This 177-nucleotide RNA was probed chemically with DMS and 2A3. For 2A3 the reverse transcriptase was SuperScript II with manganese.
[RMDB]
RNA sequence: GGGAACGACUCGAGUAGAGUCGAAAACGCUGGAAAACACCGUGACCCAGGUUAUCGAGCAAAAUAUGACCGGCCUCGAUAAUCUCAUGUAUAUGUCAUCUCAGAGCAGUGGCACCGGUCAGGCAUCACGAUUUUAUCGCUUCGGCGAUAAAAUCGUAAAAGAAACAACAACAACAAC
Reactivity to DMS in 0.01 (KOAc 150mM, MgCl2 10mM, bicine 150mM(pH8.5), 24C), signal-to-noise 1, nucleotides 027 to 126: c010g020c180u000g000g000a130a070a200a130c060a100c130c010g090u050g000a120c000c000c000a110g000g000u000u030a030u000c000g030a000g000c300a000a150a100a000u050a020u000g100a090c000c020g010g000c300c000u000c070g000a070u000a000a020u000c000u000c170a040u000g010u070a190u000a080u000g000u000c000a050u000c030u000c090a240g000a110g000c060a000g020u000g000g000c000a040c000c000g000g000u030c130a000g080g000c120a030u000c210
Reactivity to 2A3 in 0.01 (KOAc 150mM, MgCl2 10mM, bicine 150mM(pH8.5), 24C), signal-to-noise 2, nucleotides 027 to 126: c030g030c010u070g070g030a070a080a060a090c030a010c040c010g060u020g030a040c020c010c030a000g010g000u000u000a000u000c000g000a000g030c100a060a060a140a110u170a200u100g010a000c060c000g040g000c000c000u050c000g000a000u000a000a000u010c000u000c010a060u140g140u070a100u100a030u220g020u010c000a170u030c040u000c060a120g050a070g120c060a020g010u010g030g000c010a050c000c000g000g040u010c000a000g000g000c000a040u120c060
Overview
Values cover nucleotides 27 to 126. Values are in units of 0.01, from 0 to 300, in steps of 10. The reactions ran in a buffer of 150 mM KOAc, 10 mM MgCl2 and 150 mM bicine (pH 8.5), at 24 C. The DMS profile rests on 845 reads.